[RMDB]
RNA sequence: GGGAACGACUCGAGUAGAGUCGAAAAACUUCAGAAAACUAGUCUGCCCCAGCUAAAAAAGUAGAGGGCGAUAGACAGUAACUGGAUUUCCACCUUGCAGGUUGAUACCAAAAACUCAUUCUACAGGGAAAUGCAGUAUUUUUCUCAGCCAGGGGUAUGUAGAUCACAUAUUCGUAUGUGAUCUACAAAAAGAAACAACAACAACAAC
Reactivity to DMS in 0.01 (KOAc 150mM, MgCl2 10mM, bicine 150mM(pH8.5), 24C), signal-to-noise 2, nucleotides 027 to 156: a130c050u000u000c030a080g000a110a070a090a080c010u000a140g000u000c010u000g010c000c010c000c000a300g010c020u030a000a050a100a130a110a060g020u000a100g040a260g050g020g030c040g000a140u000a010g010a080c060a100g010u000a020a240c010u010g010g010a130u000u000u000c010c030a150c060c020u030u020g020c030a110g000g030u000u000g010a130u010a300c050c040a030a010a070a130a090c110u010c030a040u000u010c010u000a050c030a070g000g020g020a040a020a030u010g030c020a150g020u000a040u000u000u020u000u010c010u040c030a060g000c000c040a090g000g000g000g070u010a080
Reactivity to 2A3 in 0.01 (KOAc 150mM, MgCl2 10mM, bicine 150mM(pH8.5), 24C), signal-to-noise 4, nucleotides 027 to 156: a000c000u020u020c010a000g070a070a160a020a030c020u040a040g000u000c010u030g000c000c010c020c020a040g000c010u130a120a160a170a180a120a050g070u140a120g060a250g040g020g000c050g030a080u100a050g010a000c000a000g000u060a050a030c000u010g000g020a020u020u020u000c010c000a050c020c010u030u050g040c120a090g020g010u020u020g010a020u080a200c070c050a000a020a030a040a060c010u010c020a030u120u020c030u120a090c100a110g170g030g030a000a100a020u040g010c010a010g030u030a180u010u040u000u060u020c030u010c020a010g010c010c000a000g000g000g010g000u080a100